RNA sequence: GGGAACGACUCGAGUAGAGUCGAAAAGGAGCAGACGACGGGGUCGACGAGACGGGCCGGGCGAUGCGGAUGACCGCACUGGCCAGUCCCACCACCGACCGCUUUUUGCCCGGCGCUGGCGAAGAGCGAUCCAGGCCGUCUUCGGACGGCCUGGAUCAAAAGAAACAACAACAACAAC
Reactivity to 2A3 in 0.01 (KOAc 150mM, MgCl2 10mM, bicine 150mM(pH8.5), 24C), signal-to-noise 1, nucleotides 027 to 126: g070g010a010g000c010a020g010a070c070g120a040c080g070g000g000g110u010c000g020a040c090g020a040g000a060c010g000g000g020c030c030g030g030g010c060g050a080u090g010c020g000g010a210u280g150a170c030c000g000c000a040c060u000g000g000c000c000a010g000u040c010c000c000a030c030c020a060c020c100g030a030c000c040g020c040u090u000u000u040u060g050c010c000c000g090g020c070g000c110u030g040g010c040g030a070a050g000a070g070c060

Chemical mapping of a 177-nucleotide RNA with 2A3. 2A3 is a SHAPE reagent: it acylates the 2'-hydroxyl of flexible nucleotides of all four kinds. Reactivities are given for positions 27 through 126.